Record summary
Structure probing data (DMS and 2A3) for a 177-nucleotide construct. For DMS the reverse transcriptase was MarathonRT. For 2A3, 669 sequencing reads were counted. It was measured as part of the RMDB library OK2TRN. 2A3 adducts were read by reverse transcription with SuperScript II with manganese. The reactions ran in a buffer of 150 mM KOAc, 10 mM MgCl2 and 150 mM bicine (pH 8.5), at 24 C.
RNA sequence: GGGAACGACUCGAGUAGAGUCGAAAAAGCGGUGGACCUGUAAAGUUUAAAUUAAACUUCUGGUGUCUUCCAAAAUAAAGGUUCUCUUGAAUAAAAUAGUUAGAUGCAGGACUCAAGAUUCCUAUGCGGUCUAAGAAUAGUUCGCUAUUCUUAGACCAAAAGAAACAACAACAACAAC
Reactivity to DMS in 0.01 (KOAc 150mM, MgCl2 10mM, bicine 150mM(pH8.5), 24C), signal-to-noise 2, nucleotides 027 to 126: a100g030c300g010g030u000g000g010a020c000c000u030g000u000a060a020a030g010u000u040u000a070a160a180u010u020a020a030a010c010u010u000c140u010g000g040u010g030u000c030u000u000c030c000a040a150a080a060u010a040a130a180g000g000u000u000c070u000c030u010u000g010a080a100u010a080a090a080a120u000a130g010u010u000a070g000a040u000g000c130a010g030g000a050c060u010c060a050a110g000a190u000u000c010c000u000a140u010g030c300
Reactivity to 2A3 in 0.01 (KOAc 150mM, MgCl2 10mM, bicine 150mM(pH8.5), 24C), signal-to-noise 1, nucleotides 027 to 126: a000g040c030g000g000u000g000g030a000c000c000u000g030u090a020a080a080g000u010u050u030a230a300a110u060u050a020a090a000c040u060u000c080u120g070g000u040g020u070c020u040u110c000c000a150a050a050a050u150a020a150a040g000g000u070u000c000u050c000u000u110g040a060a070u190a220a110a070a120u120a030g100u110u070a140g020a070u050g080c020a020g030g050a040c020u010c140a000a050g050a110u030u100c000c000u030a080u090g050c000